[RMDB]
RNA sequence: GGGAACGACUCGAGUAGAGUCGAAAAGUUGGCGGUACGCUUGAGGAUGUGGAUAUUAACAAAGGCGUUAUGGUCCUAAUUAAGGCAGCAUAUAGACCGCAUCUACUAAGGAACUUGAUCGCACAAGGCCUGGUCAGAUCUUCGGAUCUGACCAGGCAAAAGAAACAACAACAACAAC
Reactivity to 2A3 in 0.01 (KOAc 150mM, MgCl2 10mM, bicine 150mM(pH8.5), 24C), signal-to-noise 1, nucleotides 027 to 126: g080u000u200g000g000c040g020g020u000a150c150g000c000u000u000g000a050g000g000a000u000g210u150g090g000a210u000a000u100u300a130a050c110a000a210a250g060g160c120g120u040u040a120u130g000g000u050c000c000u000a020a020u300u020a100a100g020g020c150a120g000c020a060u230a000u130a210g060a020c100c000g000c000a000u000c000u060a060c000u040a000a000g000g000a000a120c000u060u000g000a000u060c080g000c120a000c000a150a020g300
This 177-nucleotide RNA was probed chemically with 2A3. Conditions: 150 mM KOAc, 10 mM MgCl2 and 150 mM bicine (pH 8.5), 24 C. 2A3 is a SHAPE reagent: it acylates the 2'-hydroxyl of flexible nucleotides of all four kinds. Reactivities are given for positions 27 through 126.